[RMDB]
Structure probing data (DMS) for a 177-nucleotide construct.
The DMS profile rests on 911 reads.
It was measured as part of the RMDB library OK2TST.
Values cover nucleotides 27 to 126.

RNA sequence: GGGAACGACUCGAGUAGAGUCGAAAAAGCAUUCUAAUGGCUAAGGACAUCAGGUGCUUUGGCAGCGCUAAAGAUAGCAUUACUAAAAAGUGCGGGACUUUGAACCCUUGAGGGCACCAGACAUUACGCCCUGCUAAUUAUUCGUAAUUAGCAGGGCAAAAGAAACAACAACAACAAC
Reactivity to DMS in 0.01 (KOAc 150mM, MgCl2 10mM, bicine 150mM(pH8.5), 24C), signal-to-noise 1, nucleotides 027 to 126: a020g010c010a020u000u010c020u020a040a040u000g010g000c020u040a150a140g050g000a010c020a020u000c100a020g010g010u000g010c000u030u010u000g010g020c050a060g000c080g040c040u000a060a070a070g000a170u030a080g020c020a040u010u000a060c120u000a020a110a100a080a070g030u000g040c060g000g000g010a110c070u000u000u030g020a140a110c040c010c010u000u000g010a070g010g000g000c000a080c070c040a050g000a110c230a110u000u000a080c240
About this RNA:
The RNA was probed in 150 mM KOAc, 10 mM MgCl2 and 150 mM bicine (pH 8.5) at 24 C.